[RMDB]
RNA sequence: GGGAACGACUCGAGUAGAGUCGAAAAGCGCCGCCUGAUGCUGUACGCGAUCGACGAGCUGGCCGACGUUCCGCACGUCUACCUCGACGUGGUGAACGGCAACCACGACGAGAACGAGCGCCGCUGGAAUGAGCGGCCCGGCGACGGGUGGGCCACCCAUUGUUCCCUGCUUCGGCAGGGAACAAUGAAAAGAAACAACAACAACAAC
Reactivity to 2A3 in 0.01 (KOAc 150mM, MgCl2 10mM, bicine 150mM(pH8.5), 24C), signal-to-noise 1, nucleotides 027 to 156: g100c150g020c000c010g010c030c000u010g020a060u180g020c000u130g130u230a180c110g010c020g040a140u170c040g150a120c080g020a030g050c110u080g000g000c010c000g030a000c010g000u000u010c000c030g000c000a000c000g060u000c040u070a010c010c000u030c010g000a010c000g000u000g010g000u020g000a230a090c090g050g020c060a000a000c000c000a000c010g020a010c010g010a020g020a060a010c100g040a090g020c080g020c020c140g010c040u130g000g050a000a000u030g000a020g110c010g000g000c000c010c000g000g000c010g010a030c020g000g000g020u100g020g000g010c050c030a010c040c000